[RMDB]
An RNA of 177 nucleotides, treated with DMS and 2A3 and read out base by base. For DMS the reverse transcriptase was MarathonRT. Source: RMDB library TTRDEL, as collected in RNAgym. Conditions: 150 mM KOAc, 10 mM MgCl2 and 150 mM bicine (pH 8.5), 24 C. The 2A3 profile rests on 5,338 reads.
RNA sequence: GGGAACGACUCGAGUAGAGUCGAAAAGAUAUGGAUGCGGCUAGGGAGCCGAUUCGGAAACGAAUCAGCAUCGAUCUAGGUCGCAUCCUAAGUCAAAGACAGGUUCCUCUUCGGAGGAACCUGUCAAGUAGGUACCUAUGUUCGCAUAGGUACCUACAAAAGAAACAACAACAACAAC
Reactivity to DMS in 0.01 (KOAc 150mM, MgCl2 10mM, bicine 150mM(pH8.5), 24C), signal-to-noise 2, nucleotides 027 to 126: g000a010u010a170u000g000g020a000u000g000c000g000g020c010u000a180g010g010g000a050g040c010c020g000a000u000u000c000g000g000a060a030a090c000g020a020a010u000c010a030g010c000a260u000c110g000a050u000c010u010a110g010g020u000c000g000c000a000u000c000c010u000a000a050g000u010c020a090a090a090g020a000c010a000g000g000u000u000c000c000u000c010u000u010c200g020g000a010g000g010a000a000c010c000u000g000u000c000a000a060
Reactivity to 2A3 in 0.01 (KOAc 150mM, MgCl2 10mM, bicine 150mM(pH8.5), 24C), signal-to-noise 2, nucleotides 027 to 126: g000a000u040a020u100g000g010a000u000g010c000g000g000c020u020a020g230g160g050a000g040c010c010g000a010u000u000c000g010g030a000a000a040c000g000a010a000u000c000a010g020c030a220u270c100g210a280u070c040u030a040g140g080u120c000g010c010a000u000c000c000u010a000a000g000u000c030a120a060a050g000a000c000a000g020g020u010u030c030c030u020c010u030u070c300g080g000a000g000g000a000a000c000c000u000g000u010c010a020a000